[RMDB]
RNA sequence: GGGAACGACUCGAGUAGAGUCGAAAAUUGGUGGUGCUCCUACAUGGUUUAAUGCGUUGCGUGACUUUACGUUAAAGGGUUAUGUUCUUGCUACCAUUAUUGUGUUUCUGUGUGCUGUACUGAUGUAAAAGCAGGCGGUUCGCCGCCUGCAAAAGAAACAACAACAACAAC
Reactivity to 2A3 in 0.01 (KOAc 150mM, MgCl2 10mM, bicine 150mM(pH8.5), 24C), signal-to-noise 2, nucleotides 027 to 129: u000u040g080g000u000g130g030u030g020c000u030c040c000u080a000c040a120u230g020g060u130u000u000a240a110u110g000c030g000u000u090g020c050g010u070g030a030c010u040u000u040a000c010g100u120u050a000a090a060g080g010g000u150u030a040u110g070u080u000c040u000u130g000c000u030a020c010c010a000u000u000a000u020u200g030u000g020u010u050u010c030u000g060u000g000u020g000c000u000g000u040a010c000u000g070a060u000g020u000a090a120a030a000
Structure probing data (2A3) for a 170-nucleotide construct. The data come from the RNA Mapping Database (RMDB), library 15KLIB. Conditions: 150 mM KOAc, 10 mM MgCl2 and 150 mM bicine (pH 8.5), 24 C. High 2A3 reactivity points to a flexible backbone, as in loops and unpaired stretches. Reactivities are given for positions 27 through 129. For 2A3, 1,415 sequencing reads were counted.